[RMDB]
Structure probing data (2A3) for a 207-nucleotide construct. For 2A3 the reverse transcriptase was SuperScript II with manganese. Source: RMDB library OK3TST, as collected in RNAgym. Conditions: 150 mM KOAc, 10 mM MgCl2 and 150 mM bicine (pH 8.5), 24 C. Values cover nucleotides 27 to 156. For 2A3, 620 sequencing reads were counted.
RNA sequence: GGGAACGACUCGAGUAGAGUCGAAAACUUCUCAUUCUGACCAGCUCAGCUCUCUCAGGAGGUUGGGACUGCAAGAUCUGUGGUUCACUGUCACCCCCAUAUCAGCCUUACCCAUGUGCCUGAUCUCAAGUGCAAGCUCACUGGGCUCCGAAUGGGAGAAAGACGGUUAGUUCGCUAACCGUCUUUCAAAAGAAACAACAACAACAAC
Reactivity to 2A3 in 0.01 (KOAc 150mM, MgCl2 10mM, bicine 150mM(pH8.5), 24C), signal-to-noise 1, nucleotides 027 to 156: c000u000u030c000u000c010a030u030u040c000u000g040a030c050c000a020g010c030u000c000a000g000c000u080c010u010c030u030c160a070g140g000a030g030g070u020u040g000g000g030a010c040u070g020c050a050a050g030a050u050c050u040g040u070g020g050u040u120c100a120c120u170g230u300c030a130c020c010c000c010c000a020u080a010u090c070a000g020c020c070u080u150a080c030c010c010a040u200g030u190g140c000c010u010g010a020u070c020u000c060a080a000g050u060g060c080a020a000g020c000u000c020a020c010u020g020g010g000c020u010c000c010g020a050a000u000g000g000g000a040